[RMDB]
RNA sequence: GGGAACGACUCGAGUAGAGUCGAAAAAGCACUGGUACGAUACGUCGAACCAGUGCAGUCGUUGGGAUGGAACGCAAUUAAAUACAUGUGUGACGUGUAUUUGCGAACGACGUAAUUAUUUUUCAAAAUCACGCUAUCGUGUUCGCACGAUAGCGAAGUUCAUCUUUUACUUCGGUAAAAGAUGAACAAAAGAAACAACAACAACAAC
Reactivity to 2A3 in 0.01 (KOAc 150mM, MgCl2 10mM, bicine 150mM(pH8.5), 24C), signal-to-noise 5, nucleotides 027 to 156: a000g000c000a000c000u000g010g000u060a020c000g010a040u010a050c200g090u010c010g010a010a020c000c000a010g000u000g000c000a000g010u000c010g020u030u040g090g070g060a140u110g080g100a110a050c020g020c030a020a020u150u150a120a060a000u010a000c000a020u020g110u040g170u200g250a090c020g000u010g010u000a010u010u020u070g030c020g010a010a020c020g020a010c010g030u050a110a030u150u170a100u030u120u040u000u130c080a070a060a050a070u160c060a030c070g000c010u000a000u010c010g000u000g000u050u030c090g020c060a000c010g010a000u000a000g000c000g000a010a000
Reactivity to DMS in 0.01 (KOAc 150mM, MgCl2 10mM, bicine 150mM(pH8.5), 24C), signal-to-noise 2, nucleotides 027 to 156: a190g010c010a010c010u010g030g030u000a100c020g000a150u000a070c300g000u020c020g010a090a090c020c010a040g030u000g000c000a050g010u000c010g000u000u000g010g030g010a190u040g030g000a160a210c020g000c000a050a100u000u020a070a030a010u000a000c000a050u000g010u000g020u010g020a090c010g030u000g030u000a000u000u010u000g010c070g010a030a150c010g000a140c000g030u000a070a060u000u000a220u000u000u000u010u030c060a050a040a110a140u000c100a170c020g020c010u000a020u000c010g030u000g000u020u000c300g020c020a000c000g000a020u000a010g030c010g000a010a010